[RMDB]
RNA sequence: GGGAACGACUCGAGUAGAGUCGAAAAGUGUGAGGAAGGGAGAGGUCUCUGAAGUGGCUACCAGGGCCCCUUGUAGAUCUCUGUGAUGUCAUUCACUAAUGCUUUUACACUGGGUGACUCCUUCUAAGAAGGUUCUCUUGUUCGCAAGAGAACCUUCAAAAGAAACAACAACAACAAC
Reactivity to DMS in 0.01 (KOAc 150mM, MgCl2 10mM, bicine 150mM(pH8.5), 24C), signal-to-noise 1, nucleotides 027 to 126: g000u010g000u000g000a110g000g000a030a000g000g010g060a060g040a040g000g000u000c020u020c170u020g000a040a030g010u000g010g000c000u030a220c130c300a160g000g020g000c010c010c020c000u040u020g020u050a030g070a030u000c000u000c050u000g000u010g010a000u030g000u030c000a010u000u000c000a000c050u000a150a070u010g010c170u020u010u040u000a100c090a090c190u000g000g020g040u020g000a000c000u010c010c010u000u000c040u000a090a230
Reactivity to 2A3 in 0.01 (KOAc 150mM, MgCl2 10mM, bicine 150mM(pH8.5), 24C), signal-to-noise 1, nucleotides 027 to 126: g090u140g010u080g040a130g080g000a050a000g050g000g010a000g000a000g030g000u020c000u000c040u100g100a020a030g040u040g070g020c000u090a200c100c170a070g000g100g000c000c000c000c000u000u000g110u050a000g000a000u000c000u000c000u020g020u140g110a000u090g060u080c050a040u000u000c010a020c190u080a150a050u210g080c000u130u240u080u000a040c130a040c060u000g040g000g030u000g000a040c000u000c000c010u100u000c000u020a010a120